[RMDB]
RNA sequence: GGGAACGACUCGAGUAGAGUCGAAAAAUAGAGUGCAUGCUAAGUGAUAUCUAGAAGCCAUGUAAAAGAAAACGUUUGAAAUGUUUGCAAAGAGGAUGAGGCAUUGAGUGGACCAGAAAACAUGUCUUCCUAAAUGGGCCCAGCAAACGGUGCUGCAAUAUUAGUAUCGUUUCGACGAUACUAAUAUAAAAGAAACAACAACAACAAC
Reactivity to 2A3 in 0.01 (KOAc 150mM, MgCl2 10mM, bicine 150mM(pH8.5), 24C), signal-to-noise 4, nucleotides 027 to 156: a000u080a010g040a020g040u060g000c030a010u040g020c040u090a110a050g040u080g080a100u070a090u180c080u070a090g030a100a030g020c020c010a020u040g020u130a050a070a080a040g070a010a050a020a000c060g010u030u060u110g070a070a050a050u120g050u020u100u070g040c030a000a100a080g040a020g060g000a020u060g030a030g040g000c030a030u020u070g030a020g040u050g020g020a020c000c000a030g080a070a060a000a010c020a010u050g010u020c000u020u040c020c010u050a080a100a060u080g020g020g000c010c010c010a020g020c050a050a050a050c050g050g020u070g020c000u030g000c000a010
Reactivity to DMS in 0.01 (KOAc 150mM, MgCl2 10mM, bicine 150mM(pH8.5), 24C), signal-to-noise 3, nucleotides 027 to 156: a120u010a120g010a130g000u010g040c050a110u010g030c060u000a100a150g040u000g010a150u000a070u000c060u000a110g010a090a090g010c030c030a060u000g000u010a050a080a080a130g010a070a050a060a080c040g030u000u010u000g010a070a090a070u010g010u000u010u010g020c040a050a080a070g000a110g000g020a080u010g010a070g020g030c030a060u000u000g000a090g020u010g000g000a080c020c040a120g020a090a060a090a030c070a060u000g000u000c020u000u000c030c020u000a040a050a150u000g010g010g010c000c020c040a060g000c030a040a040a080c050g000g030u000g020c010u000g000c040a060
The data come from the RNA Mapping Database (RMDB), library OK3TST. The record gives the reactivity of an RNA of 207 nucleotides to 2A3 and DMS. For 2A3 the reverse transcriptase was SuperScript II with manganese.